[RMDB]
RNA sequence: GGGAACGACUCGAGUAGAGUCGAAAAGAUAUGGAAUAUCGAUGAUCGCGAAGAACUCGGAAACGAGGGAGCGAUAUCGAGUAUUCCUAAGUCAAAAGGCGGUGAAAUGUUCGCAUUUCACCGCCAACAAAAGAGGAGGGUUCGCCCUCCUCUUUUGAAAAGAAACAACAACAACAAC
Reactivity to 2A3 in 0.01 (KOAc 150mM, MgCl2 10mM, bicine 150mM(pH8.5), 24C), signal-to-noise 1, nucleotides 027 to 126: g000a000u070a040u190g000g040a010a000u020a010u040c050g020a010u150g240a030u030c000g040c040g200a300a090g000a090a010c020u000c000g000g090a050a110a060c010g010a010g060g000g000a030g000c000g000a000u000a000u000c010g040a010g090u000a000u010u040c020c000u020a110a020g060u060c030a000a000a050a300g020g000c040g010g040u010g010a030a000a010u140g040u120u300c300g000c150a010u000u010u000c010a000c000c000g040c020c010a000a020
Reactivity to DMS in 0.01 (KOAc 150mM, MgCl2 10mM, bicine 150mM(pH8.5), 24C), signal-to-noise 2, nucleotides 027 to 126: g000a020u000a300u000g000g000a020a040u000a020u000c010g010a010u010g010a010u000c010g020c010g020a130a200g000a080a240c000u000c010g000g000a170a100a170c010g010a020g000g000g010a080g030c000g000a000u000a000u000c000g000a020g010u010a000u000u000c000c000u000a020a140g010u000c030a100a070a110a160g000g020c000g010g000u000g000a010a020a020u000g010u000u010c190g000c030a000u000u000u000c000a000c000c000g010c000c000a020a020
Notes: An RNA of 177 nucleotides, treated with 2A3 and DMS and read out base by base. For DMS the reverse transcriptase was MarathonRT. Conditions: 150 mM KOAc, 10 mM MgCl2 and 150 mM bicine (pH 8.5), 24 C. The data come from the RNA Mapping Database (RMDB), library TTRDEL. The 2A3 profile rests on 1,192 reads.